[RMDB]
An RNA of 177 nucleotides, treated with DMS and 2A3 and read out base by base. It was measured as part of the RMDB library OK1LIB. The DMS profile rests on 4,974 reads.

RNA sequence: GGGAACGACUCGAGUAGAGUCGAAAAGACGCCUGUGUGGCGAAGCGAGCAAUGGCAUAAGCCGCAAUAGAAGAUGAGAUGGAAGCGGCAAGAUAGAAUGCUCGCAACUAGAUCCAUCUCACAGAGAAGCAUUACCAUGAUUCGUCAUGGUAAUGCUAAAAGAAACAACAACAACAAC
Reactivity to DMS in 0.01 (KOAc 150mM, MgCl2 10mM, bicine 150mM(pH8.5), 24C), signal-to-noise 3, nucleotides 027 to 126: g030a120c050g000c010c000u000g020u050g030u040g000g010c030g020a140a170g000c000g050a020g000c020a040a040u050g030g000c060a130u000a080a160g060c010c030g060c020a200a150u080a150g020a080a080g000a130u000g010a020g000a000u000g000g030a040a070g000c000g000g000c010a030a100g000a050u070a030g000a120a040u000g010c010u000c000g000c020a050a060c170u040a080g010a150u010c000c000a000u000c000u000c000a010c070a200g010a050g010a090
Reactivity to 2A3 in 0.01 (KOAc 150mM, MgCl2 10mM, bicine 150mM(pH8.5), 24C), signal-to-noise 4, nucleotides 027 to 126: g110a000c030g040c000c000u150g070u110g150u200g180g010c010g010a080a000g010c000g010a000g000c020a030a220u300g230g010c050a040u050a070a060g000c000c000g000c000a030a040u070a090g170a090a040g070a160u080g000a000g000a000u000g030g000a070a040g020c000g010g000c000a020a000g020a040u090a050g060a120a020u050g000c010u000c000g000c000a000a000c020u070a040g040a100u020c000c000a000u000c000u000c010a000c050a000g140a000g030a070
Annotation:
2A3 adducts were read by reverse transcription with SuperScript II with manganese.